[RMDB]
RNA sequence: GGGAACGACUCGAGUAGAGUCGAAAACGUUUGCAGUUCGCUGCAAACGAAAGACUCGGGGUGCCCUUCUGCGUGAAGGCUGAGAAAUACCCGUAUCACCUGAUCUGGAUAAUGCCAGCGUAGGGAAGUUCAAAACAUGGAUACUUCGGUAUCCAUGGUUAAGCGAACUCUUCGGAGUUCGCUUAACAAAAGAAACAACAACAACAAC
Reactivity to 2A3 in 0.01 (KOAc 150mM, MgCl2 10mM, bicine 150mM(pH8.5), 24C), signal-to-noise 2, nucleotides 027 to 156: c010g000u000u000u000g000c010a000g010u070u100c180g070c100u020g010c000a000a000a000c000g010a030a080a000g030a010c050u010c040g000g000g010g000u020g000c050c010c000u000u010c030u030g180c080g050u300g030a010a000g010g000c020u020g010a010g050a040a290a030u300a060c000c030c020g000u070a070u120c030a070c070c010u030g020a070u030c000u000g000g000a050u090a260a000u280g130c000c000a020g000c010g020u050a010g030g000g010a120a030g020u040u170c060a090a060a010a030c000a000u000g000g000a000u000a010c000u040u060c190g050g000u000a000u000c000c000a000u010g000
Reactivity to DMS in 0.01 (KOAc 150mM, MgCl2 10mM, bicine 150mM(pH8.5), 24C), signal-to-noise 1, nucleotides 027 to 156: c010g010u000u000u000g000c000a030g010u000u010c240g020c020u030g010c000a010a000a010c000g000a030a030a110g000a060c030u000c000g000g030g000g010u000g010c060c020c020u000u000c060u010g010c240g030u000g000a010a020g030g050c020u010g000a220g040a090a080a200u000a090c020c000c010g000u000a070u000c040a190c010c030u000g010a200u000c020u000g000g020a180u010a120a180u000g010c000c010a010g020c080g010u010a150g000g010g010a060a070g000u010u020c030a060a040a090a300c000a000u010g020g020a050u000a010c010u010u000c300g060g020u000a000u000c000c000a010u000g040
This 207-nucleotide RNA was probed chemically with 2A3 and DMS. Values cover nucleotides 27 to 156. For 2A3 the reverse transcriptase was SuperScript II with manganese. For DMS, 1,575 sequencing reads were counted. Source: RMDB library PKBLNG, as collected in RNAgym. The 2A3 profile rests on 1,300 reads.